[RMDB]
Notes: An RNA of 177 nucleotides, treated with DMS and read out base by base. Values cover nucleotides 27 to 126. The reactions ran in a buffer of 150 mM KOAc, 10 mM MgCl2 and 150 mM bicine (pH 8.5), at 24 C. For DMS, 644 sequencing reads were counted.
RNA sequence: GGGAACGACUCGAGUAGAGUCGAAAAGAUAUGGAUGACCGUGCGCACAACAGCUCGGAAACGAGACAUGUGCCACGUGUCAUCCUAAGUCAAAAGUUCACACUUCGGUUCGCCGAAGUGUGAACAACACCUCUUAGGCCUUCGGGCCUAAGAGGUGAAAAGAAACAACAACAACAAC
Reactivity to DMS in 0.01 (KOAc 150mM, MgCl2 10mM, bicine 150mM(pH8.5), 24C), signal-to-noise 1, nucleotides 027 to 126: g000a000u000a300u040g010g000a000u020g010a000c000c000g010u000g000c190g010c000a010c130a050a130c260a220g000c010u000c000g000g000a020a030a240c000g010a010g040a050c130a140u000g010u000g020c030c000a000c010g000u020g020u000c000a000u000c000c000u000a010a060g000u000c010a070a090a060a050g040u010u000c000a000c000a000c010u000u000c040g060g020u030u010c230g010c010c000g020a000a040g040u000g000u000g000a000a000c000a060a100